[RMDB]
RNA sequence: GGGAACGACUCGAGUAGAGUCGAAAAAGGUGUACCUGGCCCGGCAUCCCAGACUGCCCCGCCAGGACGCGCUCAAGGUACUGCGGGCCGAUGUGUCAGCCGACGGCGAAUACCGGGCACGGUUCAACUAGGUAAAGACGUUCGCGUCUUUACCUAGAAAAGAAACAACAACAACAAC
Reactivity to 2A3 in 0.01 (KOAc 150mM, MgCl2 10mM, bicine 150mM(pH8.5), 24C), signal-to-noise 2, nucleotides 027 to 126: a000g070g050u070g010u040a070c000c000u030g020g040c000c040c030g010g020c030a020u010c050c040c000a020g010a120c050u020g000c020c010c010c000g000c060c010a000g000g000a010c030g040c000g010c030u090c100a070a130g070g010u080a140c030u030g010c040g030g020g030c030c000g040a160u200g080u000g050u170c020a050g030c060c010g150a110c100g100g010c050g030a070a020u060a120c000c010g020g000g030c010a030c030g020g000u040u090c020a030a050
Reactivity to DMS in 0.01 (KOAc 150mM, MgCl2 10mM, bicine 150mM(pH8.5), 24C), signal-to-noise 3, nucleotides 027 to 126: a070g000g010u010g010u000a050c010c010u000g000g000c020c010c110g020g010c020a120u000c030c000c020a180g020a100c130u010g000c060c000c010c120g040c050c050a070g010g010a030c060g020c070g000c040u010c130a140a110g020g010u010a050c060u000g010c030g000g000g020c050c080g010a060u000g020u010g010u010c030a100g000c020c010g000a120c150g000g010c110g010a070a130u000a080c020c010g000g000g030c020a040c050g010g020u000u020c070a070a170